Structure probing data (DMS and 2A3) for a 177-nucleotide construct.
For DMS the reverse transcriptase was MarathonRT.
The data come from the RNA Mapping Database (RMDB), library M2PK50.
Values are in units of 0.01, from 0 to 300, in steps of 10.

RNA sequence: GGGAACGACUCGAGUAGAGUCGAAAAGCUCUAUCCUUCGGGAUAGAGCAAACGCUACGAUUGACGGUGAAGCCGGACCUCAGGUUCAGCAUAGUCGGGCUAAAAGUCACAUGUUCGCAUGUGACAAUCAAACGUCAAAGUUCGCUUUGACGUUUGAAAAAGAAACAACAACAACAAC
Reactivity to DMS in 0.01 (KOAc 150mM, MgCl2 10mM, bicine 150mM(pH8.5), 24C), signal-to-noise 2, nucleotides 027 to 126: g000c000u000c000u000a000u000c000c000u000u030c200g030g010g020a010u000a010g000a010g010c000a000a040a080c120g010c040u010a060c110g010a100u000u000g000a100c070g000g000u000g010a040a170g020c000c030g020g000a030c030c010u020c160a140g040g010u000u010c030a060g030c010a080u000a160g000u000c020g000g000g000c080u000a040a050a090a130g000u000c000a000c000a000u000g000u000u020c160g030c000a010u000g010u000g010a000c000a060a080
Reactivity to 2A3 in 0.01 (KOAc 150mM, MgCl2 10mM, bicine 150mM(pH8.5), 24C), signal-to-noise 2, nucleotides 027 to 126: g000c000u000c010u000a010u030c000c000u010u060c230g090g000g000a010u000a000g000a010g000c000a000a010a000c050g000c040u250a080c050g090a120u020u180g130a020c050g040g010u050g030a080a000g090c010c020g000g080a080c000c050u180c110a130g000g010u040u020c010a010g000c000a000u030a010g000u000c000g000g020g000c010u080a080a010a020a120g000u010c000a000c000a000u020g020u050u050c240g030c140a010u020g000u010g000a000c000a000a000